An RNA of 177 nucleotides, treated with 2A3 and DMS and read out base by base. Reactivities are given for positions 27 through 126. The data come from the RNA Mapping Database (RMDB), library TTRDEL. 2A3 adducts were read by reverse transcription with SuperScript II with manganese. For DMS, 2,045 sequencing reads were counted. The RNA was probed in 150 mM KOAc, 10 mM MgCl2 and 150 mM bicine (pH 8.5) at 24 C. The 2A3 profile rests on 2,420 reads.

RNA sequence: GGGAACGACUCGAGUAGAGUCGAAAAAAAAAAAAGAUAUGGACAUGAGGUAGACCAUUCAGGCUUGGAUUUAUCGGAAACGAUUGUCAGCCUGAUGGUCCGAAUGCAUGUCCUAAGUCAAAAAAAACAGGUGUAUAUAGUUCGCUAUAUACACCUGAAAAGAAACAACAACAACAAC
Reactivity to 2A3 in 0.01 (KOAc 150mM, MgCl2 10mM, bicine 150mM(pH8.5), 24C), signal-to-noise 1, nucleotides 027 to 126: a000a050a000a000a000a000a080a030g010a030u050a030u140g020g000a000c000a010u040g000a020g070g070u120a030g000a010c000c000a040u240u170c050a000g000g000c020u160u270g120g000a050u300u300u140a010u100c000g010g010a120a050a020c030g000a000u000u020g000u030c010a000g000c000c010u000g000a010u010g010g000u000c000c000g050a050a010u130g000c000a000u030g000u010c000c010u000a010a000g000u000c050a000a030a000a000a020a150a000a200
Reactivity to DMS in 0.01 (KOAc 150mM, MgCl2 10mM, bicine 150mM(pH8.5), 24C), signal-to-noise 2, nucleotides 027 to 126: a000a010a010a030a010a080a000a030g000a030u000a300u000g000g000a020c000a020u000g000a000g000g010u000a080g000a010c010c000a000u000u010c000a020g020g010c010u010u020g030g010a020u000u010u000a000u010c000g020g000a080a040a200c000g020a000u010u000g000u000c010a050g000c000c000u000g000a000u000g000g030u000c020c000g010a080a080u020g000c000a000u000g000u000c000c000u000a040a050g010u010c020a010a000a000a050a080a050a090a180